[RMDB]
RNA sequence: GGGAACGACUCGAGUAGAGUCGAAAAUAGCUACUGCGCUCCAGCCUGGAGAACAUAGUGAGACCCUGUCUCUUAAAAAACAAAACAAAGCAAAGCAACAACAACAACAAAACAGAAUUCAGGUGGGUUCUAGAAGCUAGAAAAGGUAAGGAAAUAAGAUCUCGGCGCGUUUCGACGCGCCGAGAUCAAAAGAAACAACAACAACAAC
Reactivity to 2A3 in 0.01 (KOAc 150mM, MgCl2 10mM, bicine 150mM(pH8.5), 24C), signal-to-noise 2, nucleotides 027 to 111: u060a000g000c010u010a020c100u030g010c030g020c070u000c010c010a130g070c010c050u100g020g010a030g010a010a000c000a010u040a000g030u020g010a030g020a030c030c020c020u030g070u020c040u010c010u070u070a070a060a010a010a010a000c110a020a070a020a010c070a070a050a010g140c160a040a010a000g010c000a000a000c000a000a000c000a000a000c000a000a000c000a000a000a080a300

Structure probing data (2A3) for a 207-nucleotide construct. Reactivities are given for positions 27 through 111. As a SHAPE reagent, 2A3 marks flexible, mostly unpaired nucleotides at the ribose 2'-OH. The RNA was probed in 150 mM KOAc, 10 mM MgCl2 and 150 mM bicine (pH 8.5) at 24 C.